Conditions: 150 mM KOAc, 10 mM MgCl2 and 150 mM bicine (pH 8.5), 24 C. The record gives the reactivity of an RNA of 177 nucleotides to 2A3 and DMS. For 2A3 the reverse transcriptase was SuperScript II with manganese. Values cover nucleotides 27 to 126. It was measured as part of the RMDB library OK2TST.

[RMDB]
RNA sequence: GGGAACGACUCGAGUAGAGUCGAAAACUGAGCUGGAGGAAAUUCCAGGCAUGCCCGUUGGCACGCACUUGCACGUGGACACCGCGUGUCUUCGGAUGGCUGACGCCCUAAUAGACGCGAUGGGGCAACCCACGCGUCGUUUCGACGACGCGUGGGUAAAAGAAACAACAACAACAAC
Reactivity to 2A3 in 0.01 (KOAc 150mM, MgCl2 10mM, bicine 150mM(pH8.5), 24C), signal-to-noise 2, nucleotides 027 to 126: c030u020g020a000g170c010u010g020g010a040g020g180a130a140a130u130u040c020c010a060g100g010c040a000u110g070c040c010c000g010u030u030g000g000c000a000c060g000c000a050c080u040u180g040c060a050c170g170u150g020g100a050c070a040c130c050g000c000g020u000g030u000c000u000u000c010g020g000a110u090g080g000c000u030g100a090c050g010c000c010c010u100a230a150u140a110g140a090c170g020c090g140a030u090g020g020g010g000c000a020
Reactivity to DMS in 0.01 (KOAc 150mM, MgCl2 10mM, bicine 150mM(pH8.5), 24C), signal-to-noise 3, nucleotides 027 to 126: c090u010g000a110g000c000u010g000g000a040g000g000a100a080a160u010u000c000c020a040g000g030c080a040u000g010c070c000c080g040u000u000g010g000c000a020c020g010c030a130c140u000u010g020c100a130c140g010u000g000g010a130c050a050c300c080g010c010g020u010g000u010c010u010u010c030g010g010a110u010g010g000c020u000g010a200c150g030c000c000c030u000a090a100u000a100g020a120c080g000c060g030a080u010g000g010g000g000c080a110
For DMS, 2,492 sequencing reads were counted.